[RMDB]
RNA sequence: GGGAACGACUCGAGUAGAGUCGAAAAGAUAUGGAGCAUGGUAGCGAUAAGCUGAGGUCGGAAACGACCUUCAGCUUUUGACGCUGAGAGUGCUCCUAAGUCAAAAGCAACCUGUUCGCAGGUUGCACAAGCUUGUCUACUUCGGUAGACAAGCUUGAAAAGAAACAACAACAACAAC
Reactivity to 2A3 in 0.01 (KOAc 150mM, MgCl2 10mM, bicine 150mM(pH8.5), 24C), signal-to-noise 1, nucleotides 027 to 126: g010a000u050a020u100g000g000a000g000c020a020u140g020g170u250a000g030c060g050a100u060a250a000g010c030u000g000a000g020g030u010c000g000g030a000a060a060c000g000a000c000c000u040u040c010a000g020c010u010u000u030u020g050a000c030g000c000u030g050a080g020a000g100u010g000c020u000c000c010u040a040a000g000u000c020a040a000a040a240g010c000a000a020c020c000u000g010u070u060c300g000c090a000g000g010u010u000g010c000a000
Reactivity to DMS in 0.01 (KOAc 150mM, MgCl2 10mM, bicine 150mM(pH8.5), 24C), signal-to-noise 4, nucleotides 027 to 126: g010a040u000a300u000g000g010a030g010c010a010u000g010g030u010a010g040c000g020a180u010a020a020g010c000u000g010a020g000g020u000c010g010g000a060a040a160c010g000a000c000c000u010u030c000a010g010c000u000u000u000u010g030a180c060g000c000u000g000a120g030a240g020u000g010c000u000c000c010u000a000a080g000u000c040a110a080a140a190g010c000a010a000c000c000u000g010u000u010c250g030c010a000g000g000u000u000g020c000a040